Structure probing data (DMS and 2A3) for a 177-nucleotide construct.
2A3 adducts were read by reverse transcription with SuperScript II with manganese.
The DMS profile rests on 714 reads.
The 2A3 profile rests on 986 reads.
RNA sequence: GGGAACGACUCGAGUAGAGUCGAAAAAGCGCCACCAUGCUGGGAUUCUCCGGUGUGUACCAGCUCGCCGAGCUGGCCACGAUGGCGCACCGUCAAGGCGUCUUCAACGUCAUGAAGGCCAUGCUGAUGACGCCUUACAGUUCGCUGUAAGGCGUCAAAAAGAAACAACAACAACAAC
Reactivity to DMS in 0.01 (KOAc 150mM, MgCl2 10mM, bicine 150mM(pH8.5), 24C), signal-to-noise 1, nucleotides 027 to 126: a040g000c000g010c000c000a020c010c020a030u010g000c040u000g000g000g010a170u010u010c120u010c000c010g000g020u000g000u010g020u000a130c030c000a030g010c010u000c000g060c300c130g000a010g010c000u000g030g030c300c030a010c070g010a010u000g000g010c000g000c030a060c020c010g000u000c040a030a110g050g010c000g050u000c080u010u030c240a060a050c030g000u000c030a070u010g030a030a060g000g000c050c080a070u000g020c050u000g000a260
Reactivity to 2A3 in 0.01 (KOAc 150mM, MgCl2 10mM, bicine 150mM(pH8.5), 24C), signal-to-noise 1, nucleotides 027 to 126: a000g000c000g020c010c000a000c000c020a010u060g000c010u000g000g000g220a300u300u030c140u000c090c000g000g040u020g000u000g040u010a030c000c000a040g050c010u010c020g300c190c240g000a000g020c000u010g010g000c020c010a030c020g080a080u060g020g000c000g000c000a020c000c020g000u050c050a030a040g030g000c010g070u080c020u120u030c060a060a060c040g080u090c060a020u040g000a050a020g000g000c030c050a140u130g030c030u070g000a120
DMS (dimethyl sulfate) methylates the pairing face of unpaired adenines and cytosines.